RNA sequence: GGGAACGACUCGAGUAGAGUCGAAAACCGUAGGCGUUGAUCAGCAACAGCUAUGGUCACAGUACCAUUCGAAAGAGUGGUAUCACAGCCAUAGACAUGCUGGUUUGACGCCUAAACGGAAAACCACAACGAACCUGUUCGCAGGUUCGUUGUGGAACAAAUUGGUCUACUUCGGUAGACCAAUUUGAAAAGAAACAACAACAACAAC
Reactivity to 2A3 in 0.01 (KOAc 150mM, MgCl2 10mM, bicine 150mM(pH8.5), 24C), signal-to-noise 3, nucleotides 027 to 156: c000c000g020u010a020g000g020c000g020u010u010g010a000u020c000a000g040c000a010a110c030a190g050c010u000a000u000g000g040u080c040a070c010a040g000u000a000c000c000a000u000u000c000g030a130a040a070g000a020g000u000g010g020u010a040u080c020a020c050a000g000c000c000a010u010a000g110a090c030a040u020g000c010u020g060g000u060u070u240g010a000c000g020c000c000u000a000a000a000c010g050g040a070a080a020a060c000c000a000c010a000a000c000g010a000a000c000c000u030g050u110u160c300g020c150a010g000g000u000u000c000g000u000u000g000u000g000g000a000a000
Reactivity to DMS in 0.01 (KOAc 150mM, MgCl2 10mM, bicine 150mM(pH8.5), 24C), signal-to-noise 2, nucleotides 027 to 156: c010c000g000u000a020g000g040c000g040u010u010g020a000u010c000a030g000c000a050a050c100a240g000c010u000a010u000g030g000u000c020a160c240a160g000u010a000c000c000a010u000u010c000g030a190a130a170g000a030g030u000g000g020u000a000u000c020a140c220a240g000c000c030a010u010a010g000a080c060a300u000g010c000u000g000g040u010u000u010g050a050c000g060c010c000u000a000a020a090c020g010g000a040a070a060a140c000c000a000c030a030a000c000g000a000a000c000c000u000g000u000u010c300g050c010a000g040g000u000u000c000g000u000u000g000u000g030g000a030a050